[RMDB]
RNA sequence: GGGAACGACUCGAGUAGAGUCGAAAAAAGGCUUCAGUAGCAGGACCCACGCAAAGAUUAUUUUUAACGCCAUCUUGCAUGUCUUUGUUACCGCCUUUACCAAUGCCAGCGAUUUUGCCAUCUUUAACAAACUUCUUAAGUUCGCUUAAGAAGUUUGAAAAGAAACAACAACAACAAC
Reactivity to DMS in 0.01 (KOAc 150mM, MgCl2 10mM, bicine 150mM(pH8.5), 24C), signal-to-noise 4, nucleotides 027 to 126: a020a040g010g010c020u000u010c300a110g010u000a000g010c000a030g010g000a050c000c130c260a050c130g000c010a060a010a050g010a050u010u000a060u010u000u010u010u010a070a170c230g010c240c180a040u000c020u000u000g010c000a050u000g000u010c010u020u010u010g020u000u000a010c010c150g010c000c010u000u000u010a150c010c000a060a070u000g010c070c040a040g010c030g010a070u000u000u000u000g000c030c040a120u000c030u000u000u000a070a100
Reactivity to 2A3 in 0.01 (KOAc 150mM, MgCl2 10mM, bicine 150mM(pH8.5), 24C), signal-to-noise 3, nucleotides 027 to 126: a020a000g070g000c030u120u090c080a010g000u020a000g000c010a000g010g000a000c030c080c060a020c110g000c020a140a130a040g020a000u060u040a070u110u270u100u130u150a150a040c100g010c060c020a020u010c030u010u010g020c020a020u090g020u020c020u150u290u050g010u020u000a000c000c000g010c000c000u010u010u010a020c000c010a010a030u090g040c030c000a020g070c060g130a150u020u030u090u200g050c050c000a060u020c040u060u080u030a090a030

Conditions: 150 mM KOAc, 10 mM MgCl2 and 150 mM bicine (pH 8.5), 24 C. The record gives the reactivity of an RNA of 177 nucleotides to DMS and 2A3. DMS adducts were read by reverse transcription with MarathonRT. Values cover nucleotides 27 to 126. The 2A3 profile rests on 1,748 reads.